Description:
An RNA of 177 nucleotides, treated with DMS and 2A3 and read out base by base. The data come from the RNA Mapping Database (RMDB), library OK2TST. Values cover nucleotides 27 to 126. DMS adducts were read by reverse transcription with MarathonRT. For 2A3, 1,041 sequencing reads were counted.
[RMDB]
RNA sequence: GGGAACGACUCGAGUAGAGUCGAAAAGACUAACAUUUUUGUGAGCAGUUGACUCUCCUUAGUGCACAUUGUGGAAUAUGUAUGCCAUGUCUCUUAAAGGGGUAAAAAGAGGUAUUCUGCAUACCUAAAGAAAGCCUUUAUUCGUAAAGGCUUUCUUAAAAGAAACAACAACAACAAC
Reactivity to DMS in 0.01 (KOAc 150mM, MgCl2 10mM, bicine 150mM(pH8.5), 24C), signal-to-noise 3, nucleotides 027 to 126: g000a130c050u000a120a090c050a090u000u000u000u000u010g010u010g020a070g040c060a090g020u000u010g000a130c040u000c040u000c020c030u010u010a050g030u010g000c080a050c070a110u000u000g010u010g000g010a070a070u010a060u000g010u000a050u000g010c010c190a050u000g000u000c010u000c000u000u000a040a090a110g010g010g000g000u000a030a090a090a070a030g000a010g000g000u000a050u000u000c110u010g000c040a070u000a030c010c080u000a060
Reactivity to 2A3 in 0.01 (KOAc 150mM, MgCl2 10mM, bicine 150mM(pH8.5), 24C), signal-to-noise 2, nucleotides 027 to 126: g030a020c020u080a120a020c060a130u110u170u120u170u190g060u040g050a040g000c030a020g040u130u100g080a070c010u040c000u060c030c000u050u050a030g030u040g040c040a030c010a080u040u100g020u080g060g050a070a070u090a040u230g060u100a040u060g000c000c030a030u050g020u010c010u000c020u000u010a000a100a070g000g010g020g000u070a110a080a030a000a010g050a060g030g000u020a020u060u080c050u020g000c000a000u000a010c010c000u000a000